[RMDB]
Chemical mapping of a 207-nucleotide RNA with DMS and 2A3. For DMS, 3,022 sequencing reads were counted.
RNA sequence: GGGAACGACUCGAGUAGAGUCGAAAAUCGCGUUGGCUGCCUAAUUCAAGGAUUUAGCGUGCCUUCAUGCUAAGGGUUUGAUAUCUGCUAAAACCCGGUGCAUUCAUCAAUGCAGGUUAAGCCAAAGAAACGGCUCACGAAUUCGUUCGUGAGCCAACUAUCUGGCUGUGUUCGCACAGCCAGAUAGAAAAGAAACAACAACAACAAC
Reactivity to DMS in 0.01 (KOAc 150mM, MgCl2 10mM, bicine 150mM(pH8.5), 24C), signal-to-noise 2, nucleotides 027 to 156: u010c070g020c200g050u000u000g000g040c080u000g000c060c030u000a050a090u010u000c050a160a200g020g020a140u000u000u000a040g020c010g000u000g000c010c070u000u000c040a050u010g000c000u000a300a150g020g000g030u010u000u030g000a150u010a070u000c070u010g000c120u000a130a020a010a020c000c000c010g000g020u010g020c020a040u000u000c120a120u000c040a160a110u000g020c050a010g010g070u000u000a070a070g030c010c000a040a090a140g000a090a110a110c110g020g010c000u010c000a000c010g000a050a090u000u000c290g010u000u000c020g040u000g010a000g010c000c010a000a010
Reactivity to 2A3 in 0.01 (KOAc 150mM, MgCl2 10mM, bicine 150mM(pH8.5), 24C), signal-to-noise 3, nucleotides 027 to 156: u070c030g000c010g070u030u020g030g010c020u070g040c000c020u090a120a100u160u090c090a110a040g090g000a040u040u030u060a030g010c060g020u050g010c010c000u020u080c030a040u080g020c000u050a070a070g000g010g000u010u030u030g070a070u060a070u120c100u120g010c040u090a010a000a040a040c000c010c000g060g030u040g000c030a070u030u160c030a070u100c060a110a150u110g030c010a000g030g050u080u130a080a000g020c010c000a020a040a040g110a030a070a010c140g010g010c000u000c000a000c000g000a010a000u040u060c180g040u110u000c010g010u030g050a000g000c000c000a000a000
For DMS the reverse transcriptase was MarathonRT. Conditions: 150 mM KOAc, 10 mM MgCl2 and 150 mM bicine (pH 8.5), 24 C.